RNA sequence: GGGAACGACUCGAGUAGAGUCGAAAAAGGUGUGGUUAUUGUGAUGAUUUAUUGUUUGAAAGUUGAUGCAUUAACGGUGAGAUUGCACAAUUGAAAUUUUAAUUAUGUAUGAACUGAUAGAUAUGAAAUACUCUCUAACGUUCGCGUUAGAGAGUAUAAAAGAAACAACAACAACAAC
Reactivity to 2A3 in 0.01 (KOAc 150mM, MgCl2 10mM, bicine 150mM(pH8.5), 24C), signal-to-noise 2, nucleotides 027 to 126: a000g180g020u150g030u070g030g000u050u080a060u100u050g010u040g030a070u020g070a060u030u000u180a110u110u090g160u090u080u110g070a130a100a000g020u050u070g090a070u090g040c000a000u030u130a110a100c040g050g090u100g050a120g010a060u030u160g020c010a010c000a030a060u010u060g100a050a020a060u070u090u060u010a160a220u020u160a030u130g010u000a010u010g040a050a000c050u000g010a000u100a110g050a010u030a090u030g080a010a040
Reactivity to DMS in 0.01 (KOAc 150mM, MgCl2 10mM, bicine 150mM(pH8.5), 24C), signal-to-noise 3, nucleotides 027 to 126: a100g000g010u000g010u000g010g010u010u000a060u010u000g020u010g010a080u020g010a080u030u020u010a060u020u010g010u020u020u020g000a090a090a070g000u000u000g000a060u020g010c010a030u010u030a070a090c140g010g020u010g000a120g030a070u010u020g000c070a050c100a040a040u010u010g020a020a100a070u030u020u010u030a070a070u020u020a030u000g000u000a050u000g010a040a050c050u010g010a120u040a040g010a050u000a030u000g000a070a110
An RNA of 177 nucleotides, treated with 2A3 and DMS and read out base by base. It was measured as part of the RMDB library OK1LIB. For 2A3, 580 sequencing reads were counted.